Description:
The record gives the reactivity of an RNA of 177 nucleotides to DMS and 2A3. For 2A3, 1,690 sequencing reads were counted. For DMS, 1,998 sequencing reads were counted. Values cover nucleotides 27 to 126. The reactions ran in a buffer of 150 mM KOAc, 10 mM MgCl2 and 150 mM bicine (pH 8.5), at 24 C. For DMS the reverse transcriptase was MarathonRT.
RNA sequence: GGGAACGACUCGAGUAGAGUCGAAAAGAAGACGUGACGAAAAGUCACGUCAAUACAGAGACUACGCAACUCUGAAAAACACAACAAAAGUGUAGAAGCGUAGCAGGAUCGAGAGAUCCUGAAAAGAGGGCGUAAAUUUAUUCGUAAAUUUACGCCCAAAAGAAACAACAACAACAAC
Reactivity to DMS in 0.01 (KOAc 150mM, MgCl2 10mM, bicine 150mM(pH8.5), 24C), signal-to-noise 2, nucleotides 027 to 126: g000a130a200g040a020c000g050u000g000a010c050g000a110a120a140a110g020u020c000a000c000g010u000c000a060a020u020a190c000a000g040a000g060a050c060u000a000c000g010c020a130a030c020u000c000u050g000a150a050a100a150a100c000a010c010a060a140c190a090a040a220a130g010u000g000u000a060g100a020a300g010c000g000u010a000g000c040a000g000g010a000u000c030g010a080g000a190g000a020u000c000c000u020g000a070a030a060a040g010a130
Reactivity to 2A3 in 0.01 (KOAc 150mM, MgCl2 10mM, bicine 150mM(pH8.5), 24C), signal-to-noise 1, nucleotides 027 to 126: g170a090a000g000a000c000g000u000g000a000c000g050a300a050a000a000g010u000c000a000c000g010u000c000a000a000u020a010c020a000g030a000g010a030c000u000a000c010g000c030a110a030c010u030c000u000g020a060a030a000a020a000c070a030c040a250a000c060a020a140a130a130g000u020g010u040a050g020a050a000g000c000g000u000a000g000c000a000g000g000a000u000c000g000a000g020a000g000a020u000c000c000u000g010a010a000a000a000g180a030